Structure probing data (2A3 and DMS) for a 177-nucleotide construct.
[RMDB]
RNA sequence: GGGAACGACUCGAGUAGAGUCGAAAAGAGCUGUAGUACAGCAAGAAGCACGCGAUCCUUGGCACCGCGUGCAAGACAAUUACGCCGGCAAAGAAGGAAAGCCGGCAUAAGUGCCAAGUAAGAGAGAGAUCAUAUAGUCCUUCGGGACUAUAUGAUCAAAAGAAACAACAACAACAAC
Reactivity to 2A3 in 0.01 (KOAc 150mM, MgCl2 10mM, bicine 150mM(pH8.5), 24C), signal-to-noise 5, nucleotides 027 to 126: g130a040g000c010u020g000u120a090g090u130a120c000a000g020c000a000a050g130a040a010g010c000a000c000g000c000g010a060u110c050c020u000u000g000g000c010a010c000c000g000c000g000u000g000c000a000a010g030a020c040a010a060u260u170a040c080g000c000c000g020g000c030a090a110a100g160a130a050g170g070a190a080a000g010c000c000g000g000c000a000u000a000a000g010u000g000c010c040a000a000g040u080a080a030g060a010g020a000g000a000
Reactivity to DMS in 0.01 (KOAc 150mM, MgCl2 10mM, bicine 150mM(pH8.5), 24C), signal-to-noise 4, nucleotides 027 to 126: g000a180g020c020u000g000u000a040g070u030a300c020a000g000c000a120a110g020a100a070g000c000a000c000g000c000g020a120u030c070c000u000u000g010g020c000a010c010c000g000c000g010u000g000c050a010a030g000a160c270a140a140u040u020a020c180g000c000c000g000g010c040a020a140a060g020a110a140g000g010a170a190a180g010c000c000g000g010c000a010u010a010a000g020u000g030c000c020a030a030g010u040a080a070g020a060g040a090g000a180
The data come from the RNA Mapping Database (RMDB), library OK1LIB. Reactivities are given for positions 27 through 126.